RNA sequence: GGGAACGACUCGAGUAGAGUCGAAAAGACCCUUUAUGGAACUGUCAUUCAACCCCAAAAAUCUAGUGCAAAUAUUGUCUUAAUUACUUAGGCUAAAAGAAAUCAGUAUUAAAGCGGGACAAGGCAUAACAGCAGCUACGCUUCGGCGUAGCUGCAACUUAGUGUCAGCGUUCGCGCUGACACUAAGAAAAGAAACAACAACAACAAC
Reactivity to 2A3 in 0.01 (KOAc 150mM, MgCl2 10mM, bicine 150mM(pH8.5), 24C), signal-to-noise 1, nucleotides 027 to 156: g060a000c000c000c050u000u200u060a150u080g010g060a040a010c060u010g030u060c010a110u170u160c000a080a300c040c000c010c030a000a250a030a000a000u130c070u100a090g060u070g080c010a000a010a240u120a130u160u000g030u000c000u010u150a100a060u070u040a130c060u120u070a040g120g010c010u070a010a080a160a000g060a000a100a040u020c030a020g030u000a000u060u160a240a070a070g060c090g000g000g000a000c000a030a030g040g000c010a030u000a060a070c100a060g020c000a000g000c010u000a000c000g000c000u070u040c090g050g000c000g010u040a000g020c000u000g000c000a010a000